[RMDB]
An RNA of 170 nucleotides, treated with DMS and 2A3 and read out base by base. The data come from the RNA Mapping Database (RMDB), library 15KLIB.

RNA sequence: GGGAACGACUCGAGUAGAGUCGAAAAUGCGCGCGGUACGUAUCGAGCAGCGCUCAACUCUGAAAAACAUCAAGACCAUGUGUCUCUAACUGUGCCACUCUGUGGUUCAGGAAACCUGGUUGAAAAAAAGGCUGCUUCUUCGGAAGCAGCAAAAGAAACAACAACAACAAC
Reactivity to DMS in 0.01 (KOAc 150mM, MgCl2 10mM, bicine 150mM(pH8.5), 24C), signal-to-noise 3, nucleotides 027 to 129: u060g000c040g030c030g030c010g020g040u020a150c210g040u010a070u060c050g010a090g040c000a060g000c040g000c000u020c030a050a080c020u020c020u060g000a000a050a020a090a190c110a210u060c100a000a000g010a120c040c030a090u100g060u010g000u070c000u030c040u000a000a070c020u010g030u020g020c030c230a060c030u080c130u070g010u030g030g010u010u060c080a040g020g010a100a000a040c030c000u030g000g000u060u000g000a000a000a000a060a100a100a100g000
Reactivity to 2A3 in 0.01 (KOAc 150mM, MgCl2 10mM, bicine 150mM(pH8.5), 24C), signal-to-noise 3, nucleotides 027 to 129: u130g000c000g000c010g000c020g000g000u070a080c030g040u050a100u110c090g030a030g050c080a010g020c000g020c010u000c010a040a070c030u020c020u070g140a170a030a000a040a020c040a180u180c110a090a010g040a140c050c030a070u140g050u030g000u000c030u000c010u080a090a100c020u000g030u000g000c020c010a020c000u050c000u010g000u000g010g000u000u000c020a040g010g000a010a030a000c000c000u020g000g000u020u000g160a000a050a050a000a000a010a000g150
The RNA was probed in 150 mM KOAc, 10 mM MgCl2 and 150 mM bicine (pH 8.5) at 24 C. For DMS the reverse transcriptase was MarathonRT.